[RMDB]
RNA sequence: GGGAACGACUCGAGUAGAGUCGAAAAUCCCAGGGGCACAGAGUAGCACGGCGGUUUGGAGAUGCCGCGGGGAGCUGAAUGGUAUGGUCAAGUGUGGCACCAGCUGCCAGACCCUGGGACCCUGGGACAUCCGGAUUACUUUCGAGUAAUCCGGAUGAAAAGAAACAACAACAACAAC
Reactivity to 2A3 in 0.01 (KOAc 150mM, MgCl2 10mM, bicine 150mM(pH8.5), 24C), signal-to-noise 2, nucleotides 027 to 126: u000c000c000c010a010g060g010g000g010c040a020c000a020g060a050g020u100a030g140c090a060c110g000g020c010g000g040u210u280u220g040g000a130g000a060u040g000c010c000g000c050g000g040g000g060a030g050c130u050g060a170a150u200g090g100u270a150u270g030g020u060c020a040a070g120u050g000u040g140g000c020a010c000c020a010g000c000u000g000c000c010a020g020a020c000c000c000u000g000g000g040a010c000c000c000u000g010g020g000a010
Reactivity to DMS in 0.01 (KOAc 150mM, MgCl2 10mM, bicine 150mM(pH8.5), 24C), signal-to-noise 1, nucleotides 027 to 126: u000c000c000c000a010g020g020g020g020c020a050c010a040g000a040g010u020a100g020c130a160c160g000g010c000g010g010u000u000u030g000g020a170g010a150u010g000c010c000g020c000g000g000g010g010a170g010c050u020g000a100a170u020g010g000u000a080u000g000g010u010c070a070a190g000u010g020u010g010g030c030a050c030c020a010g000c010u000g020c000c000a130g000a030c010c020c000u000g000g000g000a030c010c000c000u020g020g000g000a050